[RMDB]
RNA sequence: GGGAACGACUCGAGUAGAGUCGAAAAGAUAUGGAGGAGUAAGUAGAGUUCUACUGGGAGCUGUCACACUCGGAAACGAGUGAAGUCAGCGACGAUCAGUAGAGACUCUACUUACUCCUCCUAAGUCCUUUAUACCCACGUUCGCGUGGGUAUAAAGAAAAGAAACAACAACAACAAC
Reactivity to DMS in 0.01 (KOAc 150mM, MgCl2 10mM, bicine 150mM(pH8.5), 24C), signal-to-noise 2, nucleotides 027 to 126: g010a110u010a300u000g000g000a020g000g020a030g010u000a000a010g020u010a010g020a030g010u000u010c000u000a000c000u010g010g000g010a010g010c000u000g000u000c020a300c000a010c000u000c000g010g000a120a090a280c010g010a030g000u010g000a100a070g000u000c000a010g000c000g010a040c240g010a050u010c000a020g010u000a010g000a080g020a030c000u010c000u010a000c000u000u000a010c020u000c000c000u010c000c000u000a010a050g000u000c020